Chemical mapping of a 207-nucleotide RNA with 2A3. The reactions ran in a buffer of 150 mM KOAc, 10 mM MgCl2 and 150 mM bicine (pH 8.5), at 24 C. For 2A3, 1,515 sequencing reads were counted.
RNA sequence: GGGAACGACUCGAGUAGAGUCGAAAAGCUCUAAUUCUUAGGUGGCCAAAGUAGAGUGUUACGUGCUGAUCAAAAGGUAACGGACAUUUGAUUCAUUGGUUAUCGACGAGGAAGGUACUCUAAAUCGGCCAGUUACUAACGGGUGAGAUCUGAUGUUUUCUAUGUUAUGCUUCGGCAUAACAUAGAAAAAAGAAACAACAACAACAAC
Reactivity to 2A3 in 0.01 (KOAc 150mM, MgCl2 10mM, bicine 150mM(pH8.5), 24C), signal-to-noise 3, nucleotides 027 to 156: g020c020u000c010u030a080a110u160u030c030u050u130a050g030g000u040g020g010c000c000a030a040a030g020u040a010g040a010g010u010g000u000u010a010c010g010u000g010c000u010g000a120u210c110a050a070a040a030g000g000u040a040a010c000g010g010a000c000a000u040u020u010g070a080u130u060c070a030u010u000g010g000u020u000a020u030c030g040a050c050g000a010g030g010a030a020g060g030u090a080c040u010c050u110a050a100a150u080c050g000g020c020c000a040g020u100u100a110c070u030a150a040c020g020g010g050u050g030a090g010a050u040c060u090g050a080u080g140u010u040